[RMDB]
RNA sequence: GGGAACGACUCGAGUAGAGUCGAAAAACGCUCUGGCGGCUUAAUGCCCCAGCAGUCUCCAGGGGAUGCCUGUAAACCCGAAGAGACUGUCAGAUAGAACAGGAUCGCCGCCAAGUUCGCUGUAGACGUAACGGCUAAAACUCAUACAGCUCGCCCACAACAUGGUUUUGUUCGCAAAACCAUGUUGAAAAGAAACAACAACAACAAC
Reactivity to DMS in 0.01 (KOAc 150mM, MgCl2 10mM, bicine 150mM(pH8.5), 24C), signal-to-noise 1, nucleotides 027 to 156: a070c100g040c090u000c140u000g020g020c130g030g040c000u010u010a030a120u010g020c010c000c000c000a030g030c030a050g000u000c000u000c000c100a300g000g000g040g020a090u000g030c090c110u030g050u000a010a010a270c000c000c000g010a230a150g000a010g030a040c000u000g010u000c040a120g000a100u000a040g000a140a250c050a030g000g010a110u000c060g000c000c000g030c000c020a100a240g000u010u000c010g000c050u000g000u000a100g010a020c030g020u010a210a140c030g010g000c000u000a100a050a140a110c200u090c060a030u000a050c010a050g000c000u000c150g020c030c010c000a270
Reactivity to 2A3 in 0.01 (KOAc 150mM, MgCl2 10mM, bicine 150mM(pH8.5), 24C), signal-to-noise 2, nucleotides 027 to 156: a000c050g060c060u010c010u060g060g030c100g020g000c050u140u220a260a040u300g000c000c000c000c000a010g010c020a000g010u020c000u000c010c010a000g030g000g020g000a010u110g020c010c010u030g000u040a040a180a000c000c000c010g000a030a000g000a000g010a000c000u000g000u010c000a010g040a200u160a040g050a070a030c000a010g060g020a030u040c020g000c000c020g010c000c000a020a000g000u000u020c050g020c010u000g000u010a000g000a000c000g020u030a010a010c010g030g000c010u000a010a000a060a060c140u130c090a030u000a000c010a000g000c010u060c030g050c010c000c030a100
Structure probing data (DMS and 2A3) for a 207-nucleotide construct.
DMS adducts were read by reverse transcription with MarathonRT.
The reactions ran in a buffer of 150 mM KOAc, 10 mM MgCl2 and 150 mM bicine (pH 8.5), at 24 C.
Reactivities are given for positions 27 through 156.